[RMDB]
RNA sequence: GGGAACGACUCGAGUAGAGUCGAAAAGAUAUGGACCAGCGCAGAUACUGUAGCUAUACCGUCGGAAACGACGGAUAGCGCAGAUAGAGUAGCUGGUCCUAAGUCAAAAGUACCGUUCGCGGUACAAGCGUUAAUAAACCUUCGGGUUUAUUAACGCAAAAGAAACAACAACAACAAC
Reactivity to 2A3 in 0.01 (KOAc 150mM, MgCl2 10mM, bicine 150mM(pH8.5), 24C), signal-to-noise 1, nucleotides 027 to 126: g000a040u040a030u130g000g000a000c000c010a030g010c010g000c010a000g050a300u110a140c020u030g040u080a130g020c020u010a010u090a240c010c000g010u010c000g050g020a050a050a050c000g000a000c020g020g020a000u000a000g000c000g000c020a000g010a090u060a030g120a010g060u120a160g000c000u000g000g020u010c000c000u010a010a000g000u000c000a000a000a000a070g010u000a010c010c020g000u000u060c300g000c000g090g000u000a010c020a000a010
Reactivity to DMS in 0.01 (KOAc 150mM, MgCl2 10mM, bicine 150mM(pH8.5), 24C), signal-to-noise 2, nucleotides 027 to 126: g000a030u000a300u000g000g000a000c020c000a020g020c000g000c060a070g000a260u010a030c010u000g020u000a080g030c000u000a000u000a100c010c000g010u000c000g030g000a110a120a150c000g000a000c000g010g000a000u000a000g010c000g000c030a000g000a110u000a070g000a270g000u000a100g010c000u010g000g010u000c000c000u000a000a070g000u020c060a060a090a110a100g000u000a010c000c000g000u000u000c210g020c000g010g000u000a000c010a050a110
This 177-nucleotide RNA was probed chemically with 2A3 and DMS. 2A3 adducts were read by reverse transcription with SuperScript II with manganese. The reactions ran in a buffer of 150 mM KOAc, 10 mM MgCl2 and 150 mM bicine (pH 8.5), at 24 C. For 2A3, 2,242 sequencing reads were counted. For DMS the reverse transcriptase was MarathonRT.